[RMDB]
RNA sequence: GGGAACGACUCGAGUAGAGUCGAAAAACCCACAUUCGUGUGGGUAAAAAGGGGUCUCGUCGAGUCUCUAGCGUGGCGCAGGCUGAAGCCUCCACGGCCUGAACUACGCUCGGGCUCGCGAGACGGAGGCACCCAAAAACACGCAUUCGUGCGUGAAUCAACAUUUCAGAUUCGUCUGAAAUGUUGAAAAAGAAACAACAACAACAAC
Reactivity to 2A3 in 0.01 (KOAc 150mM, MgCl2 10mM, bicine 150mM(pH8.5), 24C), signal-to-noise 3, nucleotides 027 to 156: a000c000c040c000a000c000a020u090u100c260g150u060g010u010g030g030g010u090a050a050a030a020a040g150g000g000g000u020c020u030c020g210u230c100g020a010g040u030c050u030c100u300a030g020c010g010u010g000g010c050g000c080a010g000g000c000u010g030a110a030g020c000c060u060c060c020a060c020g010g000c000c000u030g020a100a050c010u010a000c010g000c030u040c030g010g010g000c000u000c010g000c000g000a010g010a000c010g010g000a020g010g030c030a070c000c000c000a080a090a030a000a000c000a000c000g000c000a030u040u090c290g070u080g000c010g000u000g020a000a080
Reactivity to DMS in 0.01 (KOAc 150mM, MgCl2 10mM, bicine 150mM(pH8.5), 24C), signal-to-noise 1, nucleotides 027 to 156: a080c010c010c010a020c000a090u000u000c250g000u000g040u000g000g000g010u010a010a020a030a090a000g020g020g010g000u000c010u000c000g010u000c000g020a020g050u010c000u020c050u000a050g040c000g140u010g030g070c050g060c020a000g000g030c010u020g030a060a130g020c040c010u000c010c070a300c110g000g010c020c020u010g010a050a000c000u000a050c050g000c010u000c070g020g000g030c010u020c030g040c020g020a010g010a000c000g030g010a110g040g040c030a170c010c010c010a030a060a050a240a050c060a010c030g010c000a150u010u010c300g040u000g020c000g040u010g020a100a250